The record gives the reactivity of an RNA of 177 nucleotides to 2A3 and DMS.
The 2A3 profile rests on 26,820 reads.
Reactivities are rounded to 0.1 and cut off at 0 and 3.
DMS adducts were read by reverse transcription with MarathonRT.
It was measured as part of the RMDB library M2PK50.
RNA sequence: GGGAACGACUCGAGUAGAGUCGAAAAUGGACGUUGUUCGCAACGUCCACAUACUGAGACGUAGGUUAAACGUAUCGCGGGCAAAAGUGCAGUUAGAAUAAGUACCUAUUGAGUUCGCUCAAUAGAAUCAAAAGGUAUAAUUCGUUAUACCUUUUGAAAAAGAAACAACAACAACAAC
Reactivity to 2A3 in 0.01 (KOAc 150mM, MgCl2 10mM, bicine 150mM(pH8.5), 24C), signal-to-noise 9, nucleotides 027 to 126: u050g000g000a000c000g000u000u000g020u040u060c140g000c110a000a000c000g000u000c000c000a000c000a000u030a010c000u070g050a020g020a030c030g050u060a060g120g070u090u160a090a190a020c030g020u030a040u110c050g000c030g020g030g000c020a060a040a040a040g050u060g020c030a030g010u070u110a050g070a130a060u130a200a020g040u040a050c000c010u000a010u000u010g000a000g010u030u100c200g000c050u000c000a000a010u020a020g030a020a050
Reactivity to DMS in 0.01 (KOAc 150mM, MgCl2 10mM, bicine 150mM(pH8.5), 24C), signal-to-noise 9, nucleotides 027 to 126: u000g000g010a010c000g020u000u000g010u010u010c190g030c010a020a000c000g010u000c000c000a010c120a060u010a090c060u000g000a120g010a050c050g010u000a060g010g010u000u000a050a080a100c080g010u000a050u000c060g010c060g010g000g010c040a040a060a070a090g010u000g010c030a060g000u000u000a070g010a080a090u010a060a080g010u000a090c150c000u000a010u000u000g000a020g010u000u010c200g010c010u000c010a010a010u000a010g010a090a130